[RMDB]
RNA sequence: GGGAACGACUCGAGUAGAGUCGAAAAUCAACAGCACCUUCACCGGCAGCCCAUGGCAAACACAUGUGCAGGUUAACUGGAUGAGAGCCACUUUGGAGGCUGCUGUUAAAACAUGGGGACUCGUUGAAACUUUAGAUGAUAAAACCAGAGAUCACAGAGGAACAAUUCGAUUCGUCGAAUUGUUCCUAAAAGAAACAACAACAACAAC
Reactivity to 2A3 in 0.01 (KOAc 150mM, MgCl2 10mM, bicine 150mM(pH8.5), 24C), signal-to-noise 1, nucleotides 027 to 156: u070c010a000a020c000a000g000c040a040c150c000u060u070c080a040c030c040g020g100c000a000g040c000c010c010a000u000g020g010c150a230a160a030c000a130c000a120u040g080u120g110c010a080g000g000u070u230a060a150c020u000g040g090a040u040g050a130g030a010g080c040c030a060c120u300u270u150g120g000a080g000g020c020u000g000c000u000g000u000u020a020a040a000a040c050a110u180g030g000g030g050a020c020u040c130g030u020u040g040a100a020a000c000u090u140u190a150g130a100u230g020a090u090a070a120a010a000c000c000a010g060a000g000a100u110c030a070c180a140g100